[RMDB]
Conditions: 150 mM KOAc, 10 mM MgCl2 and 150 mM bicine (pH 8.5), 24 C. The record gives the reactivity of an RNA of 177 nucleotides to 2A3 and DMS. DMS adducts were read by reverse transcription with MarathonRT. Reactivities are given for positions 27 through 126.
RNA sequence: GGGAACGACUCGAGUAGAGUCGAAAAAUCAGCGGGCGGCCGGUGAGCGUCUGGAAGGGCUCGUUCACCACAUUGAGCACAUUUUGCUGCAGGGUGUGCAGUGGCGAGGUGCUCGCGGGAGCAUUGACUCCACAUCAUCUUUCGAGAUGAUGUGGAGAAAAGAAACAACAACAACAAC
Reactivity to 2A3 in 0.01 (KOAc 150mM, MgCl2 10mM, bicine 150mM(pH8.5), 24C), signal-to-noise 2, nucleotides 027 to 126: a000u070c020a010g050c040g040g000g040c050g090g040c030c030g000g000u020g030a010g000c010g080u000c050u040g090g040a080a100g020g000g020c050u060c100g040u030u030c010a010c030c010a010c030a040u070u190g040a030g050c030a020c000a030u070u170u120u150g050c060u070g000c030a040g150g020g000u130g040u020g050c030a010g010u000g030g000c060g030a110g000g040u030g010c000u010c020g010c000g020g000g000a040g020c100a060u060u170g040a070
Reactivity to DMS in 0.01 (KOAc 150mM, MgCl2 10mM, bicine 150mM(pH8.5), 24C), signal-to-noise 3, nucleotides 027 to 126: a070u010c060a130g000c070g000g000g020c040g010g010c020c070g000g020u010g010a060g010c030g050u020c040u010g000g040a120a130g000g000g010c060u000c050g000u010u010c010a070c010c010a090c100a130u000u010g000a180g000c000a030c030a080u000u000u000u000g010c080u000g000c020a120g000g010g010u020g020u000g030c010a080g020u000g000g000c110g020a100g020g020u010g000c000u000c050g000c100g000g010g010a100g020c070a060u000u010g000a200